[RMDB]
The record gives the reactivity of an RNA of 177 nucleotides to DMS. Values are in units of 0.01, from 0 to 300, in steps of 10. The reactions ran in a buffer of 150 mM KOAc, 10 mM MgCl2 and 150 mM bicine (pH 8.5), at 24 C. DMS adducts were read by reverse transcription with MarathonRT.
RNA sequence: GGGAACGACUCGAGUAGAGUCGAAAAAUUUACUGAUCAGCUGCAGACAAAGAUGACAGUAUGAUUCCCGUCCUUGGGGGCAGACUCUUGGAGCAGGGGAGGUGUCAUGCAGAAAACGGACAAGAUAAAGAAAGGGAGGAUUCGUCCUCCCUUUCUUAAAAGAAACAACAACAACAAC
Reactivity to DMS in 0.01 (KOAc 150mM, MgCl2 10mM, bicine 150mM(pH8.5), 24C), signal-to-noise 2, nucleotides 027 to 126: a080u010u000u000a020c030u000g000a160u000c020a060g010c010u000g050c110a100g030a170c230a100a110a050g010a060u010g000a020c010a020g000u000a050u000g010a130u000u000c000c010c000g010u000c030c060u000u010g010g000g020g000g020c160a060g000a120c060u000c070u000u010g000g010a060g070c070a040g000g000g000g020a030g010g010u000g000u000c020a030u000g020c070a040g000a120a050a070a050c180g010g000a010c080a080a110g000a090u010a080